[RMDB]
RNA sequence: GGGAACGACUCGAGUAGAGUCGAAAACAGAUGUUUCCUCUAGCACAGCCUCCUUGGCCUUAGAGAAGACAGAGAGCAGUCUCCCGGUGGACAGCCCCAAGACCACGGAGCCUCAGGACAUCUUGGAUGGAGCCUCACCAGGGGGCACCACCAGCUCACCUUUCUAUCUCUUCGGAGAUAGAAAGGUAAAAGAAACAACAACAACAAC
Reactivity to 2A3 in 0.01 (KOAc 150mM, MgCl2 10mM, bicine 150mM(pH8.5), 24C), signal-to-noise 1, nucleotides 027 to 156: c090a010g090a120u070g010u000u050u030c040c010u000c040u010a040g040c080a090c070a160g010c060c000u200c040c110u120u250g000g000c010c000u040u050a020g000a020g010a070a010g040a010c050a010g050a000g000a000g170c100a000g060u030c030u010c040c000c010g030g020u010g000g050a100c100a060g010c030c000c000c000a080a000g040a050c030c000a010c120g070g000a040g050c010c010u080c040a030g100g020a100c000a160u070c020u110u170g080g000a070u050g070g010a040g050c010c040u010c010a120c050c070a070g080g000g000g000g000c010a050c000c000a020c000c000a000g000c000u060c000